[RMDB]
RNA sequence: GGGAACGACUCGAGUAGAGUCGAAAAGAAAGAAAGAAUGAGGAGGCCUCCCAAUGAUGCGAAGCAUCAUUUAGGAAUGAGGCCGACGACUUGCCCGGGCCCGAAGGGGCGGGGCGCUACAUUAUAAAACAGGUUUACAAUUCGUUGUAAACCUGUUAAAAGAAACAACAACAACAAC
Reactivity to 2A3 in 0.01 (KOAc 150mM, MgCl2 10mM, bicine 150mM(pH8.5), 24C), signal-to-noise 5, nucleotides 027 to 126: g060a030a080a000g110a020a090a000g080a050a090u200g020a060g070g010a010g020g000c000c000u000c000c010c010a010a010u000g010a000u000g000c170g180a210a040g010c010a000u000c010a000u040u050u120a080g040g000a180a130u110g010a010g010g000c020c000g000a000c000g000a000c010u110u080g000c000c010c000g030g230g000c010c010c010g070a080a080g010g000g010g000c010g000g010g000g000c000g000c040u130a040c040a140u190u170a070u100a200a100
Reactivity to DMS in 0.01 (KOAc 150mM, MgCl2 10mM, bicine 150mM(pH8.5), 24C), signal-to-noise 5, nucleotides 027 to 126: g010a120a100a100g010a130a070a080g010a100a070u010g020a290g020g000a300g000g010c000c010u000c000c010c010a040a000u000g000a000u010g010c020g010a210a130g010c000a000u000c000a000u010u010u020a080g020g000a170a090u040g000a030g010g020c000c000g000a050c050g000a180c170u030u010g010c010c000c000g000g020g030c010c000c010g000a150a100g010g020g010g010c000g010g020g010g010c020g020c140u020a050c080a050u020u010a100u020a090a050
Structure probing data (2A3 and DMS) for a 177-nucleotide construct.
It was measured as part of the RMDB libraries RFM100 and RFMREP.
As a SHAPE reagent, 2A3 marks flexible, mostly unpaired nucleotides at the ribose 2'-OH.
The 2A3 profile rests on 3,092 reads.